An RNA of 207 nucleotides, treated with DMS and 2A3 and read out base by base.
[RMDB]
RNA sequence: GGGAACGACUCGAGUAGAGUCGAAAACGAGGAAGCAAGGGUUGUCGCUGAGACUGACCCUGUAGCCGGCGAAGCCCUAUUACGUAAAUAUCGAGAAGAAUAUUAUACGCAAAUGGUGCAACUCACUAUGACGCGUAUGAAAACUCUAUGCGAGGAGCGGGUACUAAAGUUUCGACUUUAGUACCCGAAAAGAAACAACAACAACAAC
Reactivity to DMS in 0.01 (KOAc 150mM, MgCl2 10mM, bicine 150mM(pH8.5), 24C), signal-to-noise 2, nucleotides 027 to 156: c050g010a120g000g000a180a070g040c020a100a060g000g000g040u010u000g000u000c000g010c140u000g020a300g030a040c070u010g060a040c000c060c010u000g020u000a070g040c020c000g040g010c010g030a110a140g010c010c030c020u000a190u000u000a090c080g010u000a020a040a130u010a060u020c070g020a120g010a120a170g010a070a070u000a050u000u000a090u010a000c010g000c020a060a180a060u000g000g010u000g020c100a070a100c270u010c010a030c020u010a040u000g000a260c170g000c010g000u010a000u010g000a030a020a030a050c040u010c040u000a040u010g000c000g000a080g020g010a130g030
Reactivity to 2A3 in 0.01 (KOAc 150mM, MgCl2 10mM, bicine 150mM(pH8.5), 24C), signal-to-noise 2, nucleotides 027 to 156: c040g000a010g110g040a120a030g050c090a020a130g030g000g000u060u060g130u070c020g040c120u110g030a070g070a260c060u070g050a050c000c060c030u000g000u030a010g000c010c000g020g000c040g060a080a010g000c000c010c010u070a160u120u180a000c000g000u010a020a150a080u160a110u160c120g010a030g030a280a000g030a070a030u070a040u120u040a040u010a000c000g000c000a000a000a080u030g020g010u010g010c050a050a230c050u030c050a000c000u010a010u050g020a010c290g010c000g010u000a000u070g000a020a020a000a000c010u000c000u040a080u110g030c010g030a020g090g000a010g170
Source: RMDB library OK3TST, as collected in RNAgym.